Source information:
This 207-nucleotide RNA was probed chemically with DMS and 2A3. As a SHAPE reagent, 2A3 marks flexible, mostly unpaired nucleotides at the ribose 2'-OH. The RNA was probed in 150 mM KOAc, 10 mM MgCl2 and 150 mM bicine (pH 8.5) at 24 C. For DMS the reverse transcriptase was MarathonRT.
[RMDB]
RNA sequence: GGGAACGACUCGAGUAGAGUCGAAAAGAUUAAGUGGGAGCGUCGCCCUCUCGGUGCAUCGGAUAUUAAUUAGCCAGUGCGUGGCAUUACGCAUAUUGAUGUCUACUUUGGCGUAGACUGUGCCAAUUUAAGGAUUGUUGGGCAAUCCAGCCCUAGAACUAGUACCAUCGUUCGCGAUGGUACUAGUAAAAGAAACAACAACAACAAC
Reactivity to DMS in 0.01 (KOAc 150mM, MgCl2 10mM, bicine 150mM(pH8.5), 24C), signal-to-noise 2, nucleotides 027 to 156: g010a120u020u000a050a080g000u010g000g000g020a040g020c060g020u000c080g070c020c000c050u010c060u000c040g040g030u000g020c050a100u010c060g020g020a080u000a070u000u000a080a080u010u000a070g020c050c030a100g020u000g000c020g000u000g010g040c070a110u000u000a010c030g030c060a050u000a080u000u000g010a060u000g000u000c000u000a040c010u000u000u010g050g010c160g040u000a070g000a040c010u000g010u010g020c050c040a050a050u000u010u020a080a120g000g010a090u000u010g000u000u000g000g000g030c110a070a180u000c100c120a100g010c030c010c010u010a110g000a130
Reactivity to 2A3 in 0.01 (KOAc 150mM, MgCl2 10mM, bicine 150mM(pH8.5), 24C), signal-to-noise 3, nucleotides 027 to 156: g080a010u090u150a040a100g080u100g000g020g000a030g040c020g050u060c020g030c000c030c000u050c000u030c030g030g010u050g010c000a010u070c100g050g000a050u050a040u140u140a180a100u100u080a060g030c030c030a040g010u010g060c030g000u010g040g010c110a040u060u190a020c020g000c020a010u040a090u100u090g140a130u060g000u000c020u020a030c080u160u140u110g070g000c060g000u000a020g010a040c030u020g050u030g030c020c030a050a090u070u110u150a050a030g100g000a080u000u080g050u060u060g020g000g030c020a010a040u040c050c020a020g030c010c020c000u010a030g020a030